RNA sequence: GGGAACGACUCGAGUAGAGUCGAAAAGGUGGAAUAUUUUAAUCCAUCAGGUAGUGUAAAGGAUAGAGCAGCAUUAUCUAUGAUAGAAGAAGCUGAGAGGACUAAUCUAAUAAAUAAAGAUACUGUAAUAAUUGAGCCAACUAGUGGAAAUACAGGAAUAUUAUACCCUGUUCGCAGGGUAUAAUAUAAAAGAAACAACAACAACAAC
Reactivity to 2A3 in 0.01 (KOAc 150mM, MgCl2 10mM, bicine 150mM(pH8.5), 24C), signal-to-noise 1, nucleotides 027 to 156: g000g000u020g010g090a020a050u200a280u230u260u040u030a120a030u110c020c000a030u000c020a010g070g030u110a080g080u060g040u100a180a100a040g050g000a070u120a070g030a020g010c030a050g000c000a000u110u040a000u130c100u050a070u150g170a120u080a080g030a030a000g000a050a000g010c070u020g030a010g000a000g110g020a000c010u080a060a060u000c000u000a080a030u060a300a140a000u120a050a200a000g020a000u040a070c000u020g000u020a040a010u030a070a030u120u040g030a010g000c020c030a000a080c060u080a010g120u190g050g050a020a030a160u110a000c000a000g140g020a020
Reactivity to DMS in 0.01 (KOAc 150mM, MgCl2 10mM, bicine 150mM(pH8.5), 24C), signal-to-noise 1, nucleotides 027 to 156: g030g110u000g060g000a080a230u030a130u000u000u000u020a150a170u010c010c000a000u000c020a060g000g050u000a080g030u010g010u000a020a100a040g000g000a120u000a050g010a140g040c090a130g000c020a040u000u000a000u000c000u010a060u000g010a090u000a050g000a130a110g010a170a090g000c100u000g000a140g000a110g000g010a070c000u000a030a120u000c030u000a010a130u040a020a090a110u000a030a040a140g000a280u010a140c030u000g000u000a060a090u000a040a180u000u000g000a170g010c040c010a050a080c050u000a030g000u000g010g000a090a050a140u000a060c040a030g000g010a140

Source information
Chemical mapping of a 207-nucleotide RNA with 2A3 and DMS. Conditions: 150 mM KOAc, 10 mM MgCl2 and 150 mM bicine (pH 8.5), 24 C. For 2A3 the reverse transcriptase was SuperScript II with manganese. Values cover nucleotides 27 to 156. For DMS, 1,352 sequencing reads were counted.